RNA sequence: GGGAACGACUCGAGUAGAGUCGAAAAAAGCUUCAACGCCUUUUUUUCCAAUCUUCUUUAGCACCGGGCUAGGGAGUAAGCCCGUGGAACCUUAGUUUUGUUCCCUCGGGACUUACUUGUGGUUCCUGUGGUGUACUCCUGACCCUGCUGCUUUGAACACAGCUGUAUGGUUCGCCAUACAGCUGUGAAAAGAAACAACAACAACAAC
Reactivity to 2A3 in 0.01 (KOAc 150mM, MgCl2 10mM, bicine 150mM(pH8.5), 24C), signal-to-noise 1, nucleotides 027 to 156: a000a000g100c180u300u300c120a190a140c070g070c010c060u060u110u060u020u030u050u110c050c040a080a160u080c070u090u030c030u000u170u080a000g000c000a000c020c040g020g000g020c030u050a080g020g070g000a000g000u070a030a000g010c000c000c010g030u030g010g010a010a000c000c000u050u000a040g020u060u230u020u130g040u130u110c010c010c040u050c130g090g000g000a010c010u000u030a010c000u010u040g090u080g020g000u000u000c020c000u050g110u210g010g010u020g030u010a020c000u000c000c000u010g020a040c000c000c000u000g020c020u000g000c000u030u100u080g030a070a020
This 207-nucleotide RNA was probed chemically with 2A3. The 2A3 profile rests on 673 reads. As a SHAPE reagent, 2A3 marks flexible, mostly unpaired nucleotides at the ribose 2'-OH. The RNA was probed in 150 mM KOAc, 10 mM MgCl2 and 150 mM bicine (pH 8.5) at 24 C. Reactivities are given for positions 27 through 156.